Chemical mapping of a 177-nucleotide RNA with DMS and 2A3. Reactivities are given for positions 27 through 126. The reactions ran in a buffer of 150 mM KOAc, 10 mM MgCl2 and 150 mM bicine (pH 8.5), at 24 C. For 2A3, 14,078 sequencing reads were counted.

RNA sequence: GGGAACGACUCGAGUAGAGUCGAAAAGCAGCCUGCACGCCCGCCUCGCGUCCCGGGGGGGUCCCGCCUCCCACCCCGCCUCUGGACUUGUCUCUUUCCCCGCGCGCGCGGACAGAGCCGGCGUUUAGGCUUACUUUAUUUUCGAAUAAAGUAAGCCAAAAGAAACAACAACAACAAC
Reactivity to DMS in 0.01 (KOAc 150mM, MgCl2 10mM, bicine 150mM(pH8.5), 24C), signal-to-noise 4, nucleotides 027 to 126: g030c090a080g010c000c010u010g020c070a120c060g000c010c010c050g010c040c010u010c050g000c050g000u000c030c050c070g000g000g010g010g010g000g010u010c040c030c030g000c030c020u000c010c000c020a190c050c020c010c020g010c040c020u000c040u000g010g000a090c070u000u010g000u000c040u000c050u000u010u000c020c010c000c040g010c120g000c070g000c080g000c050g000g010a100c090a100g000a120g020c020c030g000g010c040g010u010u000u010a080
Reactivity to 2A3 in 0.01 (KOAc 150mM, MgCl2 10mM, bicine 150mM(pH8.5), 24C), signal-to-noise 6, nucleotides 027 to 126: g040c030a010g030c000c010u050g010c030a020c060g020c000c010c010g030c000c010u030c020g040c020g030u060c000c020c020g010g000g000g000g000g010g010u030c020c010c010g040c010c010u010c010c000c000a050c000c020c000c000g050c010c010u040c030u040g020g030a050c000u030u080g050u020c020u010c000u060u040u030c000c010c000c000g000c000g000c000g010c000g000c010g010g020a030c040a050g060a020g030c010c010g020g000c030g010u050u050u110a040